[RMDB]
RNA sequence: GGGAACGACUCGAGUAGAGUCGAAAAGAGUAAAUAGAGGAGUCAGGGUUCGCACCGGCUCCGCGAACCUAGGGUAACACUGACUCUGGAGCGCAAGAGAGAGCAGACGAAGAUACGUCUGCAUAGACAGGUAGUGACUCUUCGGAGUCACUACCUGAAAAGAAACAACAACAACAAC
Reactivity to DMS in 0.01 (KOAc 150mM, MgCl2 10mM, bicine 150mM(pH8.5), 24C), signal-to-noise 1, nucleotides 027 to 126: g010a170g010u010a050a050a040u060a120g010a120g000g000a040g000u010c020a050g010g000g050u000u000c020g020c000a090c180c050g000g030c080u000c070c260g010c000g010a000a070c000c000u010a020g020g000g000u010a050a120c130a300c010u020g000a010c010u000c040u000g000g020a020g000c020g000c010a000a040g010a080g000a090g020a060g010c000a030g000a000c020g080a130a140g000a120u000a140c080g020u000c020u000g000c020a000u000a020g000a300
Reactivity to 2A3 in 0.01 (KOAc 150mM, MgCl2 10mM, bicine 150mM(pH8.5), 24C), signal-to-noise 2, nucleotides 027 to 126: g120a060g010u150a170a060a120u290a130g130a070g040g000a000g000u080c120a190g010g030g000u000u040c000g050c020a020c060c020g000g000c010u010c000c000g000c000g000a000a030c010c040u110a030g170g000g000u080a080a050c030a000c070u000g030a000c000u000c000u000g000g020a060g030c080g000c090a120a000g050a020g020a000g000a010g080c020a000g000a000c030g000a120a020g010a160u090a190c000g000u000c000u000g010c000a000u000a000g100a030
An RNA of 177 nucleotides, treated with DMS and 2A3 and read out base by base. The reactions ran in a buffer of 150 mM KOAc, 10 mM MgCl2 and 150 mM bicine (pH 8.5), at 24 C. The 2A3 profile rests on 873 reads.